This 177-nucleotide RNA was probed chemically with DMS. The RNA was probed in 150 mM KOAc, 10 mM MgCl2 and 150 mM bicine (pH 8.5) at 24 C. The data come from the RNA Mapping Database (RMDB), libraries RFM100 and RFMREP.
RNA sequence: GGGAACGACUCGAGUAGAGUCGAAAAGAGGCAAGCUCGCUUGCCUCUGAUUUUUUAUUUGACGAAUGUCCGGAUAUGAGCAAGAAGCACCUAAGUGCGGAUUGCGAAUAUACGGAGGCUGGUGUAAUCGCACUCACGAUUUCGAUCGUGAGUGCGAAAAAGAAACAACAACAACAAC
Reactivity to DMS in 0.01 (KOAc 150mM, MgCl2 10mM, bicine 150mM(pH8.5), 24C), signal-to-noise 1, nucleotides 027 to 126: g000a010g000g000c000a010a000g000c120u020c300g000c030u000u000g000c000c000u000c000u000g000a000u000u040u060u020u060u030a100u000u000u010g000a030c090g010a080a140u030g010u000c000c010g010g010a010u000a000u000g010a280g030c000a000a000g000a300a250g000c000a000c010c220u040a100a090g000u000g000c000g020g000a300u000u000g000c000g010a170a020u000a030u000a060c020g000g000a080g030g000c050u030g050g000u000g000u010a120a170